[RMDB]
RNA sequence: GGGAACGACUCGAGUAGAGUCGAAAAGCGCAUUAGCCGGCUAAUUAGCCGUAUAGCGCAUAUGCGCUAAUCGCGAUGCUAAUGCAUGCCGUAGCAUGCCGCGCGCGGCUAUACGCGCGUAUAUACGCGAGCCAGAUUAUUUCGAUAAUCUGGCUCGAAAAGAAACAACAACAACAAC
Reactivity to 2A3 in 0.01 (KOAc 150mM, MgCl2 10mM, bicine 150mM(pH8.5), 24C), signal-to-noise 1, nucleotides 027 to 126: g050c030g000c000a040u030u030a030g000c030c000g000g020c020u000a140a140u100u080a040g000c020c020g020u020a010u030a010g010c030g020c010a020u120a130u300g030c010g020c020u030a020a080u160c080g000c000g100a090u100g000c020u050a020a020u060g000c040a030u080g000c000c050g050u010a050g040c040a030u070g010c000c060g070c020g010c000g030c000g030g010c060u050a020u010a060c030g000c000g000c000g090u030a020u030a000u000a060c130g000
Reactivity to DMS in 0.01 (KOAc 150mM, MgCl2 10mM, bicine 150mM(pH8.5), 24C), signal-to-noise 2, nucleotides 027 to 126: g000c070g010c000a050u000u000a100g020c060c050g020g000c000u000a210a040u010u010a050g030c020c010g020u000a090u050a020g020c000g060c030a190u020a050u020g040c000g020c010u000a020a120u000c200g040c040g030a220u030g040c020u000a030a010u000g000c040a030u020g010c000c260g010u020a140g010c050a000u010g020c030c150g000c040g000c020g000c000g020g020c100u000a070u010a070c100g000c000g040c000g030u020a060u000a150u010a070c120g030
This 177-nucleotide RNA was probed chemically with 2A3 and DMS.
DMS adducts were read by reverse transcription with MarathonRT.
The reactions ran in a buffer of 150 mM KOAc, 10 mM MgCl2 and 150 mM bicine (pH 8.5), at 24 C.
It was measured as part of the RMDB library OK2TRN.